[RMDB]
The record gives the reactivity of an RNA of 177 nucleotides to DMS. The RNA was probed in 150 mM KOAc, 10 mM MgCl2 and 150 mM bicine (pH 8.5) at 24 C. High DMS reactivity at an A or C suggests that its Watson-Crick edge is free. For DMS the reverse transcriptase was MarathonRT. Values are in units of 0.01, from 0 to 300, in steps of 10. The DMS profile rests on 860 reads. It was measured as part of the RMDB library M2PK50.
RNA sequence: GGGAACGACUCGAGUAGAGUCGAAAAACGAUGUCGUUCGCGACAUCGUAAAUUCUAUAACCUUGCUUGAAGUCUACUUGGUUGUAAAGCGAGACAAGUCAGUGAGAGUCCUAUUCGUAGGACUCAAAACGUCUACGUUCUUCGGAACGUAGACGUUAAAAGAAACAACAACAACAAC
Reactivity to DMS in 0.01 (KOAc 150mM, MgCl2 10mM, bicine 150mM(pH8.5), 24C), signal-to-noise 1, nucleotides 027 to 126: a020c010g020a000u000g050u000c000g020u000u010c170g040c010g010a000c010a000u000c000g000u000a020a040a110u020u000c080u000a130u010a100a140c070c000u010u020g000c020u000u000g000a090a080g010u010c020u020a090c060u000u010g020g000u000u010g020u000a060a030a060g020c110g000a060g000a190c090a080a040g000u010c080a080g040u000g030a300g020a020g000u000c000c000u000a010u010u000c130g030u010a010g000g000a000c010u020c010a010a010